The record gives the reactivity of an RNA of 177 nucleotides to DMS and 2A3. DMS adducts were read by reverse transcription with MarathonRT. 2A3 adducts were read by reverse transcription with SuperScript II with manganese. The RNA was probed in 150 mM KOAc, 10 mM MgCl2 and 150 mM bicine (pH 8.5) at 24 C. The DMS profile rests on 2,457 reads. Values cover nucleotides 27 to 126. In probing experiments dimethyl sulfate is read out at A N1 and C N3, which are open when not base-paired. Source: RMDB library OK2TRN, as collected in RNAgym.
RNA sequence: GGGAACGACUCGAGUAGAGUCGAAAAGUACUGUUGAUAGUUUGGAUAUGCAACUAUAUUCACGUGACAUUAACGAGUAUCACAAAAUUUACUUAGACUUGAAAGAAAAGAGUAAACCAAUUCACGGGAUAUACCGUUGGUUCGCCAACGGUAUAUCAAAAGAAACAACAACAACAAC
Reactivity to DMS in 0.01 (KOAc 150mM, MgCl2 10mM, bicine 150mM(pH8.5), 24C), signal-to-noise 4, nucleotides 027 to 126: g010u000a040c120u010g010u000u010g010a030u000a020g030u000u010u000g000g000a060u000a020u000g010c110a110a120c210u000a040u000a030u000u000c030a090c300g030u000g000a040c120a040u000u000a060a070c060g000a080g010u000a020u010c110a080c140a070a050a050a060u010u000u010a010c050u000u000a130g000a170c120u000u000g010a090a100a160g000a020a050a090a140g010a060g000u000a010a050a110c040c040a070a080u010u000c100a050c170g000g020
Reactivity to 2A3 in 0.01 (KOAc 150mM, MgCl2 10mM, bicine 150mM(pH8.5), 24C), signal-to-noise 4, nucleotides 027 to 126: g010u010a010c030u020g120u130u030g010a020u040a090g120u050u070u100g010g000a020u020a030u050g100c090a180a060c110u140a020u010a020u040u040c030a020c140g070u090g040a040c040a080u040u050a030a020c080g010a050g080u030a030u100c040a010c070a070a160a040a100u070u100u050a020c010u050u040a010g030a050c000u020u060g060a090a100a010g050a010a120a050a040g080a010g020u080a090a140a060c030c010a040a100u140u090c070a060c160g190g000